Chemical mapping of a 177-nucleotide RNA with DMS.
Source: RMDB library OK2TRN, as collected in RNAgym.
[RMDB]
RNA sequence: GGGAACGACUCGAGUAGAGUCGAAAAUGCAUUCAUUGGGCUGAUUGCUGGCGUUGUUUCCGCAUUCGUGAAGUGGGGGGCUGAAGUUCCAUUGCCGCCACGUAGCCCGGUGGAUAUGUUUAAUGCAAACCUCCGAAAAUUUCGAUUUUCGGAGGUUAAAAGAAACAACAACAACAAC
Reactivity to DMS in 0.01 (KOAc 150mM, MgCl2 10mM, bicine 150mM(pH8.5), 24C), signal-to-noise 2, nucleotides 027 to 126: u000g010c020a020u000u000c010a000u000u010g010g010g000c000u000g020a040u020u000g030c100u000g040g010c100g030u010u010g000u000u010u040c000c020g030c100a050u010u010c080g030u010g010a110a100g040u010g020g010g010g020g010g040c070u000g020a090a110g020u020u010c060c050a130u000u010g010c100c010g020c020c000a000c050g000u010a060g000c000c020c010g000g020u000g000g000a020u000a040u000g010u000u000u000a100a080u010g010c090a070
For DMS, 2,053 sequencing reads were counted. Reactivities are given for positions 27 through 126. In probing experiments dimethyl sulfate is read out at A N1 and C N3, which are open when not base-paired.